[RMDB]
RNA sequence: GGGAACGACUCGAGUAGAGUCGAAAAAUUGGGAAAGGCGCAUAGCUAAAGAUUUGUCACAAUAUGAAUACACUACAGUUCUUCUAGAACGUCAGCCUAGAAGGUCGCCGUAUGUUAAAUUUAUCUAUUUUAUUAAAGGCUUUUUAUAUCAUACAUCAACUUAUCUAACAUUCGUGUUAGAUAAGUUAAAAGAAACAACAACAACAAC
Reactivity to DMS in 0.01 (KOAc 150mM, MgCl2 10mM, bicine 150mM(pH8.5), 24C), signal-to-noise 1, nucleotides 027 to 156: a180u000u020g000g000g110a140a030a100g030g020c010g060c080a070u010a100g020c070u000a070a110a210g010a100u010u020u000g010u000c040a030c110a090a090u010a160u030g020a060a100u030a070c020a040c060u000a020c030a070g030u010u000c010u000u000c000u000a000g000a060a060c000g000u010c150a090g020c050c000u020a010g000a050a060g000g020u010c070g000c000c010g000u000a030u020g000u000u000a020a020a160u000u020u000a100u000c010u000a190u040u000u010u010a150u000u010a180a020a200g000g030c020u000u000u000u000u030a090u000a050u040c000a110u000a040c020a100u010c030
Reactivity to 2A3 in 0.01 (KOAc 150mM, MgCl2 10mM, bicine 150mM(pH8.5), 24C), signal-to-noise 1, nucleotides 027 to 156: a000u030u080g000g080g000a000a090a080g030g000c000g020c050a060u030a050g020c020u050a020a130a030g080a150u060u070u130g050u170c070a020c030a070a020u110a000u180g030a030a000u120a060c030a000c080u090a000c050a030g030u050u020c000u010u000c000u030a010g030a050a000c000g060u030c050a000g050c000c000u010a000g030a020a020g000g000u020c010g000c000c010g000u000a000u040g000u020u090a070a210a180u040u240u050a090u040c030u130a170u130u050u300u000a100u100u110a190a080a030g000g000c000u160u010u020u050u090a120u030a030u100c030a020u060a110c020a080u090c000
The record gives the reactivity of an RNA of 207 nucleotides to DMS and 2A3. For 2A3 the reverse transcriptase was SuperScript II with manganese. DMS adducts were read by reverse transcription with MarathonRT. Source: RMDB library OK3TST, as collected in RNAgym.